This 177-nucleotide RNA was probed chemically with 2A3 and DMS. For 2A3, 1,478 sequencing reads were counted. The RNA was probed in 150 mM KOAc, 10 mM MgCl2 and 150 mM bicine (pH 8.5) at 24 C. The DMS profile rests on 922 reads.

[RMDB]
RNA sequence: GGGAACGACUCGAGUAGAGUCGAAAACGGCGCUGUGGUCCCCUACGACCCCAGUGUCUUCGAGGGUUACAAGGGACCCCCGCUGCCGCCUGAUGAGGACGAAAGGUGCCGCACACUGGAGACUCUGCGUAGUUUUUGAGUUCGCUCAAAAACUACGAAAAGAAACAACAACAACAAC
Reactivity to 2A3 in 0.01 (KOAc 150mM, MgCl2 10mM, bicine 150mM(pH8.5), 24C), signal-to-noise 1, nucleotides 027 to 126: c010g010g000c000g000c020u000g020u060g040g030u030c040c010c000c020u010a010c040g000a000c000c020c000c030a110g060u090g270u200c030u050u070c060g070a180g030g030g000u000u050a020c020a060a000g020g000g000a010c000c000c000c000c010g000c030u090g010c000c020g040c000c010u060g020a120u130g020a030g040g040a070c040g060a120a000a040g040g020u030g040c040c040g050c060a020c010a040c030u030g030g010a040g030a030c000u020c030u060g000
Reactivity to DMS in 0.01 (KOAc 150mM, MgCl2 10mM, bicine 150mM(pH8.5), 24C), signal-to-noise 1, nucleotides 027 to 126: c070g000g010c040g000c010u010g000u010g000g000u010c000c040c030c050u000a210c230g000a050c000c000c000c090a100g040u000g020u000c130u010u000c060g000a130g000g000g000u000u000a060c160a120a150g020g000g010a040c030c000c030c010c120g000c040u020g050c040c020g020c030c040u010g010a090u000g000a040g000g000a080c090g020a050a230a100g000g000u010g020c050c110g000c070a130c070a020c090u000g010g010a300g010a060c030u010c010u000g020